[RMDB]
RNA sequence: GGGAACGACUCGAGUAGAGUCGAAAACGAUCAAGAUAGCGACCGGAAGCUGGCUUGGAAGGAUCGAUUUCUUCCGCAGAACCGGCCUCAGAUUCGAUUCAAAACUUGGCCUGACCGGUGGGGAAGAGCCAUUAUGCGGAUUCGUCCGCAUAAUGGCAAAAGAAACAACAACAACAAC
Reactivity to DMS in 0.01 (KOAc 150mM, MgCl2 10mM, bicine 150mM(pH8.5), 24C), signal-to-noise 3, nucleotides 027 to 126: c150g000a130u000c060a070a080g020a130u000a080g010c090g000a050c060c020g000g030a130a100g020c040u000g020g000c080u000u020g020g000a070a060g040g000a010u000c230g000a130u000u000u000c010u010u010c020c030g010c060a060g000a080a120c050c030g000g000c090c060u010c070a070g000a140u000u000c050g000a070u000u010c070a070a050a110a130c080u000u000g010g010c040c020u000g010a100c010c040g000g010u010g000g010g000g020a100a070g000a120
Reactivity to 2A3 in 0.01 (KOAc 150mM, MgCl2 10mM, bicine 150mM(pH8.5), 24C), signal-to-noise 2, nucleotides 027 to 126: c010g030a040u090c060a080a040g070a200u070a070g110c070g080a110c030c000g000g050a050a030g110c060u050g070g020c010u040u090g040g000a040a030g040g020a020u080c060g030a040u040u100u000c000u050u010c010c000g020c040a030g040a110a080c050c030g050g020c020c000u110c020a030g020a060u090u080c030g020a040u070u030c020a090a050a110a120c050u040u050g030g020c000c010u010g020a050c000c030g000g020u020g020g010g000g020a070a040g010a010